About this RNA:
The record gives the reactivity of an RNA of 177 nucleotides to DMS and 2A3. For DMS the reverse transcriptase was MarathonRT. It was measured as part of the RMDB library OK2TST. The RNA was probed in 150 mM KOAc, 10 mM MgCl2 and 150 mM bicine (pH 8.5) at 24 C. Reactivities are given for positions 27 through 126. DMS (dimethyl sulfate) methylates the pairing face of unpaired adenines and cytosines. The 2A3 profile rests on 3,669 reads.
RNA sequence: GGGAACGACUCGAGUAGAGUCGAAAAUCAAUGCAAAGGGUUGGAGUUGGUAUGUUUUAUGUCCUUGCUGCGGUCUCGGGCUGUAAAGACCCUCCAACGCUGCACCCAAGCCGCCUCCACACAUCCCCCCAAUAGUUUGAUUCGUCAAACUAUUGGGAAAAGAAACAACAACAACAAC
Reactivity to DMS in 0.01 (KOAc 150mM, MgCl2 10mM, bicine 150mM(pH8.5), 24C), signal-to-noise 5, nucleotides 027 to 126: u010c130a090a120u010g000c060a080a110a060g000g000g020u000u000g000g000a090g000u010u010g010g010u000a040u010g010u010u010u000u000a060u010g010u000c010c020u000u000g000c040u010g020c150g010g010u010c020u000c120g010g000g010c010u000g010u000a020a040a060g010a040c020c010c010u000c010c010a030a040c050g000c040u000g020c050a100c030c010c020a090a170g010c040c050g000c020c010u000c020c010a040c070a070c120a150u010c010c020c020
Reactivity to 2A3 in 0.01 (KOAc 150mM, MgCl2 10mM, bicine 150mM(pH8.5), 24C), signal-to-noise 2, nucleotides 027 to 126: u040c010a000a060u090g040c040a110a100a100g090g080g000u010u020g020g000a030g010u130u100g100g010u070a110u160g160u020u040u000u040a040u070g030u020c000c000u020u040g010c050u120g040c050g100g060u020c020u010c030g000g000g000c020u040g030u080a050a040a020g030a030c010c000c000u010c010c010a000a020c040g030c030u020g000c010a020c000c010c000a010a010g030c000c010g000c000c020u040c010c000a040c010a020c000a100u010c000c000c000